[RMDB]
RNA sequence: GGGAACGACUCGAGUAGAGUCGAAAACCAACCGCCUUCGGGCGGUUGGGAUGACAGUCGCCAGGAAAGUCCGGGCUGACUGUCCACGACAGAACCCGGCUUAAAUCUAUCGCUUCGGCGAUAGAAAUAGUUAUAACGUCUUCGGACGUUAUAACUAAAAAGAAACAACAACAACAAC
Reactivity to 2A3 in 0.01 (KOAc 150mM, MgCl2 10mM, bicine 150mM(pH8.5), 24C), signal-to-noise 2, nucleotides 027 to 126: c000c010a010a000c010c000g020c020c020u090u120c300g150g040g000c000g000g000u010u000g010g020g010a030u120g020a020c000a010g000u010c020g050c030c000a000g030g060a290a270a070g200u010c000c020g000g020g030c110u130g020a000c000u000g000u060c000c010a080c090g090a010c010a040g120a070a080c000c000c000g050g040c060u120u200a050a180a110u090c000u010a010u000c000g000c020u030u080c240g150g000c000g000a000u000a000g000a000a030a010
Reactivity to DMS in 0.01 (KOAc 150mM, MgCl2 10mM, bicine 150mM(pH8.5), 24C), signal-to-noise 3, nucleotides 027 to 126: c000c000a010a000c000c000g030c000c000u000u010c210g010g020g060c010g000g020u000u000g000g000g000a050u010g010a030c020a020g030u000c000g000c020c010a040g020g000a270a200a200g020u010c000c020g000g040g000c020u020g020a010c000u000g010u000c010c080a070c080g020a070c150a090g010a120a160c010c000c000g010g010c080u000u000a090a100a180u000c000u000a000u000c000g000c000u000u010c190g020g030c000g010a000u000a000g000a010a050a060
Structure probing data (2A3 and DMS) for a 177-nucleotide construct. For DMS the reverse transcriptase was MarathonRT. 2A3 adducts were read by reverse transcription with SuperScript II with manganese. It was measured as part of the RMDB library M2PK50.